[RMDB]
RNA sequence: GGGAACGACUCGAGUAGAGUCGAAAAUGUGAGUACAUCAUAAGGUUUAUUAAAUAAUAUCAACACCGUAUCUGCUAAUGAAGGAGUAGGGCGACGAUUACUUUUUGCCUGUAAUCUAUUUGGACGAGCAGGAAUAAUACUUCGGUAUUAUUCCUGCAAAAGAAACAACAACAACAAC
Reactivity to DMS in 0.01 (KOAc 150mM, MgCl2 10mM, bicine 150mM(pH8.5), 24C), signal-to-noise 1, nucleotides 027 to 126: u020g020u000g000a080g040u020a030c030a040u000c040a060u020a120a120g010g020u000u000u000a110u020u000a120a040a100u010a050a080u000a060u010c020a070a140c060a010c090c000g000u000a090u010c030u010g000c030u000a050a090u010g010a090a050g010g000a030g000u000a090g000g010g010c020g000a120c190g010a070u000u000a050c030u000u000u000u010u000g000c110c030u000g000u000a040a060u000c070u000a110u000u010u010g000g020a080c170g000a150
Reactivity to 2A3 in 0.01 (KOAc 150mM, MgCl2 10mM, bicine 150mM(pH8.5), 24C), signal-to-noise 1, nucleotides 027 to 126: u060g040u010g000a070g040u100a100c000a160u100c050a060u100a180a070g000g040u120u090u250a130u110u300a120a080a110u290a110a050u080a020u080c010a060a020c010a010c040c040g000u040a160u110c000u010g000c040u040a060a130u280g080a140a000g050g020a010g060u040a080g080g000g000c020g060a060c050g050a040u040u000a020c000u130u090u050u140u240g020c020c000u000g000u020a000a000u000c070u040a110u150u030u110g050g020a000c040g060a080
The data come from the RNA Mapping Database (RMDB), library OK2TRN. Structure probing data (DMS and 2A3) for a 177-nucleotide construct. 2A3 adducts were read by reverse transcription with SuperScript II with manganese. Conditions: 150 mM KOAc, 10 mM MgCl2 and 150 mM bicine (pH 8.5), 24 C.